[RMDB]
RNA sequence: GGGAACGACUCGAGUAGAGUCGAAAAAAAUGCUAAUGUACAUGCAAGUAUGUAUGUAAGUACUUGUACUAUAUUGUUUAGGGAAUCACUGGACAUAUAGGCCUUCAAGACUGAUACCAGCAGCCACUGACACGUAUAUCUUCGGAUAUACGUGUCAAAAAGAAACAACAACAACAAC
Reactivity to DMS in 0.01 (KOAc 150mM, MgCl2 10mM, bicine 150mM(pH8.5), 24C), signal-to-noise 4, nucleotides 027 to 126: a030a020a090u010g020c020u010a040a040u040g010u000a020c050a010u010g020c100a070a170g030u090a040u000g010u010a090u020g010u000a070a050g020u000a040c020u000u000g000u000a050c000u010a000u000a020u010u030g010u010u000u010a020g000g000g010a160a100u020c120a050c020u000g000g000a030c000a010u010a000u010a040g000g000c130c140u030u010c050a030a000g010a070c030u000g000a040u020a060c160c170a040g010c030a040g000c010c020a100c220
Reactivity to 2A3 in 0.01 (KOAc 150mM, MgCl2 10mM, bicine 150mM(pH8.5), 24C), signal-to-noise 5, nucleotides 027 to 126: a000a010a020u170g020c070u090a160a020u210g010u100a050c010a010u020g040c020a030a060g210u100a120u120g050u000a010u050g090u110a080a050g000u020a130c010u000u000g010u020a010c000u000a000u010a040u060u210g010u000u010u010a020g040g010g080a110a040u180c020a060c100u010g020g010a000c000a000u020a000u010a000g020g070c030c050u050u090c020a020a000g010a040c020u030g040a040u100a080c040c030a000g000c010a010g020c000c000a060c060
The data come from the RNA Mapping Database (RMDB), library OK1LIB. Structure probing data (DMS and 2A3) for a 177-nucleotide construct. Values cover nucleotides 27 to 126. The RNA was probed in 150 mM KOAc, 10 mM MgCl2 and 150 mM bicine (pH 8.5) at 24 C. High 2A3 reactivity points to a flexible backbone, as in loops and unpaired stretches.